[RMDB]
RNA sequence: GGGAACGACUCGAGUAGAGUCGAAAACGUAACCUCUUGCGGCAGGGACGGACUGCAAGAGACAUUACCUGGAGAAGAAACGCCGUCCAACUGCGAAUCAGCAACCGAGGAAAAUCGCAGGGCGCGAAAAAUUAUAAAUAUUCGUAUUUAUAAUUUUAAAAGAAACAACAACAACAAC
Reactivity to DMS in 0.01 (KOAc 150mM, MgCl2 10mM, bicine 150mM(pH8.5), 24C), signal-to-noise 3, nucleotides 027 to 126: c170g010u030a070a070c200c000u000c030u000u000g000c000g000g000c030a080g010g000g000a020c020g010g010a300c000u000g010c000a010a010g000a040g010a040c110a070u000u000a100c030c090u010g010g000a110g010a140a070g030a120a080a090c140g000c020c010g010u000c000c000a180a110c040u000g000c020g010a060a070u020c060a070g020c060a130a100c250c200g000a060g000g010a030a100a080a100u000c010g000c020a020g000g000g010c090g000c070g000a020
Reactivity to 2A3 in 0.01 (KOAc 150mM, MgCl2 10mM, bicine 150mM(pH8.5), 24C), signal-to-noise 3, nucleotides 027 to 126: c040g030u030a000a050c030c000u010c000u000u010g000c000g020g000c010a030g030g000g040a020c010g010g000a010c000u010g000c000a000a000g000a000g030a010c020a090u070u160a090c010c070u120g120g050a180g000a190a050g050a080a160a010c080g000c010c000g010u000c000c020a000a010c020u010g000c010g020a070a070u090c020a040g140c050a110a090c050c080g060a120g020g070a080a120a020a080u030c000g010c000a010g020g060g000c080g000c010g050a140
Conditions: 150 mM KOAc, 10 mM MgCl2 and 150 mM bicine (pH 8.5), 24 C.
Chemical mapping of a 177-nucleotide RNA with DMS and 2A3.
For 2A3 the reverse transcriptase was SuperScript II with manganese.
For DMS the reverse transcriptase was MarathonRT.
It was measured as part of the RMDB library OK1LIB.
The DMS profile rests on 3,481 reads.